[RMDB]
RNA sequence: GGGAACGACUCGAGUAGAGUCGAAAACGGUGGUGAGUGAAUACCAAGCUAAGAGCAUCUUCUCCAGUCCUCAUCUUCCGAUGACUAGCUGUAGACACUAGGCCAACUCUUUGUCUUAUUUAAGAAACAGGUCCAUAUUGUUCGCAAUAUGGACCUGAAAAGAAACAACAACAACAAC
Reactivity to DMS in 0.01 (KOAc 150mM, MgCl2 10mM, bicine 150mM(pH8.5), 24C), signal-to-noise 2, nucleotides 027 to 126: c150g000g040u000g020g010u010g000a070g020u010g010a130a130u000a090c050c100a060a100g000c060u000a120a140g020a100g000c040a030u000c020u000u000c040u000c020c080a120g000u000c050c030u000c050a050u000c050u000u010c120c030g000a060u000g000a150c060u010a080g000c010u000g010u000a050g000a120c020a040c040u000a050g010g000c040c030a080a100c110u000c040u000u000u000g000u000c010u020u000a130u010u010u030a050a060g020a120a090a220
Reactivity to 2A3 in 0.01 (KOAc 150mM, MgCl2 10mM, bicine 150mM(pH8.5), 24C), signal-to-noise 1, nucleotides 027 to 126: c030g040g020u040g020g040u020g040a140g000u100g060a030a070u100a100c030c070a020a010g070c030u160a090a010g030a030g040c020a080u000c030u120u020c030u030c000c010a010g060u070c020c010u040c000a060u000c000u080u020c000c010g060a070u060g010a020c030u010a020g010c070u050g040u040a000g010a020c020a000c030u020a040g000g090c000c000a080a100c030u080c030u100u110u120g020u000c000u120u070a210u140u230u130a060a040g070a070a060a070
Overview
Chemical mapping of a 177-nucleotide RNA with DMS and 2A3. Source: RMDB library OK2TRN, as collected in RNAgym. The RNA was probed in 150 mM KOAc, 10 mM MgCl2 and 150 mM bicine (pH 8.5) at 24 C. For DMS, 1,601 sequencing reads were counted.